[RMDB]
RNA sequence: GGGAACGACUCGAGUAGAGUCGAAAACAAGGACGUUUCGACGUCCUUGAUAGGACCGGCCUUUUGGGCUAAGGCCAUACGGACAGCCGGGUCCACUGCCGAACGCAAACCCCUUCGGGGGUUUGAAAGACCGUUACUAGUUCGCUAGUAACGGUCUAAAAGAAACAACAACAACAAC
Reactivity to DMS in 0.01 (KOAc 150mM, MgCl2 10mM, bicine 150mM(pH8.5), 24C), signal-to-noise 1, nucleotides 027 to 126: c000a000a000g000g000a020c000g000u000u000u010c210g010a030c010g010u000c000c000u000u000g000a040u000a080g000g010a050c010c020g010g010c010c040u000u000u000u030g000g000g020c100u000a050a080g010g010c010c030a090u000a280c150g010g000a080c150a150g010c010c020g000g000g000u010c020c020a110c110u000g010c000c000g010a160a050c220g000c010a010a000a010c000c000c000c000u000u020c200g000g010g010g020g020u000u000u000g010a040a080
Reactivity to 2A3 in 0.01 (KOAc 150mM, MgCl2 10mM, bicine 150mM(pH8.5), 24C), signal-to-noise 1, nucleotides 027 to 126: c000a010a030g000g030a010c030g020u040u040u230c280g050a040c030g010u060c000c000u000u000g020a010u060a030g000g000a040c000c050g010g000c030c020u180u160u150u270g120g030g030c020u040a070a110g100g020c000c000a030u050a070c030g050g030a030c030a040g040c020c000g100g000g030u060c040c030a040c080u050g000c010c000g070a060a030c060g000c100a000a000a010c020c000c000c000u020u050c130g020g010g000g000g060u000u000u000g000a010a000
The record gives the reactivity of an RNA of 177 nucleotides to DMS and 2A3. Reactivities are given for positions 27 through 126. It was measured as part of the RMDB library M2PK50. For 2A3, 929 sequencing reads were counted. For DMS, 1,138 sequencing reads were counted. For DMS the reverse transcriptase was MarathonRT.